Source information
An RNA of 177 nucleotides, treated with DMS and 2A3 and read out base by base. The DMS profile rests on 3,389 reads. 2A3 is a SHAPE reagent: it acylates the 2'-hydroxyl of flexible nucleotides of all four kinds. Reactivities are given for positions 27 through 126. It was measured as part of the RMDB library OK2TRN. The reactions ran in a buffer of 150 mM KOAc, 10 mM MgCl2 and 150 mM bicine (pH 8.5), at 24 C.
RNA sequence: GGGAACGACUCGAGUAGAGUCGAAAAUUGCCAGAAACUCGCCCGCAGCAGACGGAGAAGCGGCGCAUGCUGGCCAGCUUCCGCUUAUUGUUAUCAGACCGCGCCUUUAGCUGUUAUUUGGUAAUGCAAAUAUUUCAGCUUUCGAGCUGAAAUAUUUAAAAGAAACAACAACAACAAC
Reactivity to DMS in 0.01 (KOAc 150mM, MgCl2 10mM, bicine 150mM(pH8.5), 24C), signal-to-noise 4, nucleotides 027 to 126: u000u010g010c010c020a110g000a080a070a090c100u010c120g020c000c010c040g020c030a050g010c040a120g010a090c040g000g010a120g010a070a090g010c030g000g010c300g010c140a060u010g010c030u000g010g020c090c060a070g000c050u000u000c010c020g020c070u010u010a070u010u010g010u000u010a080u020c080a060g000a070c050c070g010c060g000c020c060u000u000u010a090g000c040u000g010u000u000a110u010u000u010g010g010u010a040a040u000g020c170
Reactivity to 2A3 in 0.01 (KOAc 150mM, MgCl2 10mM, bicine 150mM(pH8.5), 24C), signal-to-noise 2, nucleotides 027 to 126: u040u050g020c020c000a030g080a080a150a090c030u050c100g100c000c000c000g030c000a010g000c000a030g060a140c050g080g020a100g010a110a030g030c010g010g000c030g000c030a030u110g030c010u040g080g030c000c000a010g000c000u060u040c010c030g020c060u070u100a080u090u250g030u050u060a050u150c000a020g040a090c010c000g060c020g050c020c040u100u150u160a030g010c010u050g020u150u010a150u050u090u060g030g010u090a090a000u090g020c030